Notes
The record gives the reactivity of an RNA of 177 nucleotides to DMS. The data come from the RNA Mapping Database (RMDB), library OK2TST. The reactions ran in a buffer of 150 mM KOAc, 10 mM MgCl2 and 150 mM bicine (pH 8.5), at 24 C. For DMS the reverse transcriptase was MarathonRT.

RNA sequence: GGGAACGACUCGAGUAGAGUCGAAAAGACAUUGUCAUGCUGUGUUUAAUCAGCCAAGGUAAGCCCAAGGAACUGUGGACUAGAGGAGCUGCAAAGUUGCAGAGCGAAGAGCCUGGCUUCAGGGAGACUCAGGCUUACUCUUCGGAGUAAGCCUGAGAAAAGAAACAACAACAACAAC
Reactivity to DMS in 0.01 (KOAc 150mM, MgCl2 10mM, bicine 150mM(pH8.5), 24C), signal-to-noise 1, nucleotides 027 to 126: g000a080c090a090u000u010g000u010c190a040u010g000c130u000g020u000g000u010u020u020a120a070u000c050a000g040c020c150a080a090g010g000u010a080a110g000c000c000c020a110a100g000g000a060a130c070u000g020u000g000g040a100c060u000a110g000a130g000g000a120g030c030u000g000c070a050a130a150g000u000u000g040c000a050g000a070g000c010g010a080a080g000a130g010c060c010u010g000g000c060u000u000c080a050g040g000g010a140g010a170